About this RNA: The data come from the RNA Mapping Database (RMDB), library TTRDEL. Chemical mapping of a 177-nucleotide RNA with 2A3 and DMS. DMS adducts were read by reverse transcription with MarathonRT. Conditions: 150 mM KOAc, 10 mM MgCl2 and 150 mM bicine (pH 8.5), 24 C. For 2A3 the reverse transcriptase was SuperScript II with manganese.

RNA sequence: GGGAACGACUCGAGUAGAGUCGAAAAGAUAUGGAUAUGCUAAUACGCAAGGCAACCAAUCGGAAACGAUUGGCUGCUGAUGACCGGAUAACAUAUCCUAAGUCAAAGCAGAACUUCGGUUCUGCAACUACUCUAACAUGUUCGCAUGUUAGAGUAGAAAAGAAACAACAACAACAAC
Reactivity to 2A3 in 0.01 (KOAc 150mM, MgCl2 10mM, bicine 150mM(pH8.5), 24C), signal-to-noise 5, nucleotides 027 to 126: g010a010u030a010u080g000g000a000u010a000u010g000c030u050a070a030u290a250c030g040c160a150a300g020g000c000a000a020c000c000a000a000u000c000g000g000a030a020a010c010g000a010u000u000g000g000c000u000g000c000u030g030a060u210g090a140c160c030g020g000a020u030a070a000c000a000u010a000u000c000c000u000a040a010g020u010c020a080a100a060g010c000a000g010a010a000c010u090u160c300g140g000u010u000c000u000g000c000a010a000
Reactivity to DMS in 0.01 (KOAc 150mM, MgCl2 10mM, bicine 150mM(pH8.5), 24C), signal-to-noise 8, nucleotides 027 to 126: g010a030u000a210u010g000g010a010u000a000u000g010c020u000a080a050u010a110c020g000c100a120a200g010g010c000a000a020c000c000a000a010u000c000g010g000a070a030a120c000g010a010u000u000g000g010c010u000g010c000u000g000a060u000g000a130c300c010g000g000a060u000a040a060c000a010u000a010u000c000c000u000a020a110g010u000c010a090a090a120g000c000a000g000a010a010c000u000u010c220g030g000u000u000c000u000g010c010a030a050